Overview: An RNA of 177 nucleotides, treated with DMS and 2A3 and read out base by base. 2A3 is a SHAPE reagent: it acylates the 2'-hydroxyl of flexible nucleotides of all four kinds.
RNA sequence: GGGAACGACUCGAGUAGAGUCGAAAACAUUCUCCAAAUUGUCGAGUAUGUCCUCGUCCCUGGUAAAAUGGUGGCUGAAGGCUGGCCCGUUGUAGGCCAGGGUCUGGGCCACGUGCUGAAAGUCCACAUCGCGGUGAUAUUUCGAUAUCACCGCGAUAAAAGAAACAACAACAACAAC
Reactivity to DMS in 0.01 (KOAc 150mM, MgCl2 10mM, bicine 150mM(pH8.5), 24C), signal-to-noise 2, nucleotides 027 to 126: c080a080u010u000c030u010c000c100a070a080a120u060u060g020u030c090g040a090g020u000a020u020g000u020c020c030u000c020g020u020c000c000c010u040g000g020u000a030a060a110a100u030g000g050u020g000g020c000u000g000a060a040g000g000c000u000g000g040c030c000c070g020u030u020g000u030a080g000g020c030c000a020g000g040g000u030c010u000g000g000g010c000c040a010c060g020u000g010c120u000g000a130a130a120g030u030c030c070a130c230
Reactivity to 2A3 in 0.01 (KOAc 150mM, MgCl2 10mM, bicine 150mM(pH8.5), 24C), signal-to-noise 2, nucleotides 027 to 126: c030a060u060u000c020u000c020c030a020a060a200u100u200g050u080c000g010a010g060u050a050u090g030u110c010c010u010c000g040u000c020c010c000u000g050g000u130a040a050a070a070u140g070g000u080g080g000c000u010g100a060a000g080g060c080u050g000g000c000c000c010g200u100u160g090u120a080g020g050c000c000a010g020g040g000u000c040u070g000g000g000c000c000a000c000g060u120g000c000u040g020a020a050a070g000u010c010c010a040c020
It was measured as part of the RMDB library OK1LIB. For 2A3 the reverse transcriptase was SuperScript II with manganese. Conditions: 150 mM KOAc, 10 mM MgCl2 and 150 mM bicine (pH 8.5), 24 C.